RNA sequence: GGGAACGACUCGAGUAGAGUCGAAAACGGUUAUCCUGCGAUUUUUGACGAGGUUCGGCAGGAAUGCCAAAUCAACAAUGCGCAUGUUGUCGCCGGAUGUGGAUCCGGGUAUCAAAGCGUUUAUAGCUAACCAGUAAAACUUCGGUUUUACUGGUUAAAAAGAAACAACAACAACAAC
Reactivity to DMS in 0.01 (KOAc 150mM, MgCl2 10mM, bicine 150mM(pH8.5), 24C), signal-to-noise 7, nucleotides 027 to 126: c140g020g010u010u010a090u010c010c010u000g020c000g010a050u010u010u010u000u010g020a110c180g000a130g020g010u010u010c070g010g010c000a010g000g050a070a180u010g000c000c010a050a070a080u010c070a080a130c110a060a050u010g000c020g010c020a070u010g000u010u000g010u010c110g000c000c000g000g000a020u000g020u040g020g010a040u000c010c020g000g010g000u010a060u010c090a050a070a090g010c040g000u000u000u010a080u030a100g010c180
Reactivity to 2A3 in 0.01 (KOAc 150mM, MgCl2 10mM, bicine 150mM(pH8.5), 24C), signal-to-noise 3, nucleotides 027 to 126: c040g010g030u050u050a060u030c000c000u030g000c050g020a100u050u040u050u140u250g100a100c120g080a060g170g000u060u070c020g190g000c010a000g000g070a000a030u050g000c010c000a070a060a000u120c060a010a070c030a080a180u200g030c000g000c050a020u080g090u140u060g050u080c040g050c090c000g020g000a040u090g080u190g270g030a000u010c020c030g000g000g010u020a020u110c060a060a050a050g000c020g000u030u190u190a130u090a110g020c030